RNA sequence: GGGAACGACUCGAGUAGAGUCGAAAAGGAGUUGAGGGUUCGGGCUCGAGCGAAGGCUUGUGGUUCGGGCAUUCUUAGAGCGGAGGAGACUGCGUGAGGCUGGUUUCACAGAGCAGCGUCCACCUCCCGCUUUCGACGGUGGAAGGAUCACGGGCCGGAAACACUAAGAGUUCGCUCUUAGUGUUUCAAAAGAAACAACAACAACAAC
Reactivity to 2A3 in 0.01 (KOAc 150mM, MgCl2 10mM, bicine 150mM(pH8.5), 24C), signal-to-noise 2, nucleotides 027 to 156: g070g020a020g010u100u120g070a120g050g010g010u150u160c100g000g100g010c040u040c100g020a030g030c100g000a130a050g020g010c000u000u040g010u010g020g000u020u020c020g040g060g060c030a020u140u100c060u030u100a040g000a000g010c000g000g000a020g040g020a020g010a030c060u090g040c060g020u130g040a060g130g020c030u010g000g080u040u220u210c190a150c010a040g010a030g050c010a010g020c010g020u010c020c000a210c010c040u020c010c020c010g000c000u040u090u030c020g020a020c030g000g000u010g020g030a160a000g020g000a010u030c000a000c000g000g010g010c020c000g030
Structure probing data (2A3) for a 207-nucleotide construct. It was measured as part of the RMDB library ARCHII. The 2A3 profile rests on 891 reads.